The record gives the reactivity of an RNA of 177 nucleotides to DMS and 2A3. Reactivities are given for positions 27 through 126. The 2A3 profile rests on 9,896 reads. The reactions ran in a buffer of 150 mM KOAc, 10 mM MgCl2 and 150 mM bicine (pH 8.5), at 24 C.
[RMDB]
RNA sequence: GGGAACGACUCGAGUAGAGUCGAAAAGCGCUGGCUAUCUGUGGCGCGACUUGCUGUCAACAGUAAAGUUGCUGCCUUUGUGAUGGGCAGCUUAUUUGGAAUAACUUUUUCCAUGUUAUAAAGGCAGGGAUAAUAUAAAUUUCGAUUUAUAUUAUCCAAAAGAAACAACAACAACAAC
Reactivity to DMS in 0.01 (KOAc 150mM, MgCl2 10mM, bicine 150mM(pH8.5), 24C), signal-to-noise 4, nucleotides 027 to 126: g020c260g020c020u000g010g020c010u010a020u030c000u010g020u020g010g010c020g020c000g000a010c010u000u010g020c010u010g000u100c260a170a170c020a010g010u010a030a020a030g010u010u000g000c000u030g030c010c000u000u020u050g020u030g010a030u010g000g010g000c010a000g000c010u010u010a000u020u010u000g000g000a070a040u010a090a100c140u000u030u010u000u000c010c000a050u000g010u010u000a090u020a050a080a110g000g000c130a090g010
Reactivity to 2A3 in 0.01 (KOAc 150mM, MgCl2 10mM, bicine 150mM(pH8.5), 24C), signal-to-noise 8, nucleotides 027 to 126: g080c030g000c020u020g170g030c020u040a020u050c010u060g080u050g030g000c000g000c000g000a010c000u010u010g000c000u010g070u130c080a080a100c000a210g020u060a120a150a020g000u000u010g000c030u130g000c010c000u040u090u140g110u030g010a030u020g000g020g020c020a000g000c000u000u030a130u010u080u060g030g030a030a020u080a110a140c060u110u110u000u030u000c010c010a010u050g050u060u080a200u120a130a130a050g120g010c070a050g110

For 2A3 the reverse transcriptase was SuperScript II with manganese. For DMS, 11,026 sequencing reads were counted. Source: RMDB library OK1LIB, as collected in RNAgym. For DMS the reverse transcriptase was MarathonRT.